[RMDB]
RNA sequence: GGGAACGACUCGAGUAGAGUCGAAAAUUUCCCAGGCCUGCUGCUUGGUGCCGGUCUGGGGACAGACAGUGCUAUACUAGAGCAGAGGAAAUCCAGACAGGUCGUUUCCAUCUGCCUGGGGCCUGUCGCAUUAGGGGAAGUUCGCUUCCCCUAAUGCAAAAGAAACAACAACAACAAC
Reactivity to DMS in 0.01 (KOAc 150mM, MgCl2 10mM, bicine 150mM(pH8.5), 24C), signal-to-noise 1, nucleotides 027 to 126: u010u000u000c000c000c000a050g000g010c010c000u000g010c020u000g000c180u030u050g010g000u000g020c040c110g030g000u010c010u000g000g010g020g020a040c300a110g000a010c010a030g020u010g030c010u000a150u020a260c010u020a050g020a130g010c010a020g010a110g000g000a030a020a040u000c010c010a150g000a070c250a090g000g000u010c290g030u010u000u000c000c000a080u020c020u000g000c020c000u010g000g000g000g000c000c020u000g000u010c000
Reactivity to 2A3 in 0.01 (KOAc 150mM, MgCl2 10mM, bicine 150mM(pH8.5), 24C), signal-to-noise 1, nucleotides 027 to 126: u010u020u080c000c000c000a000g000g000c000c010u050g010c030u070g040c080u160u150g220g010u110g060c020c020g030g020u000c000u000g000g000g040g010a010c050a020g020a000c000a000g040u060g220c030u170a150u050a300c000u020a020g030a030g020c010a000g020a010g010g010a050a000a010u030c000c010a030g080a300c050a130g000g000u110c030g040u060u010u050c000c010a170u000c020u010g000c050c000u010g030g000g000g000c000c000u010g000u030c060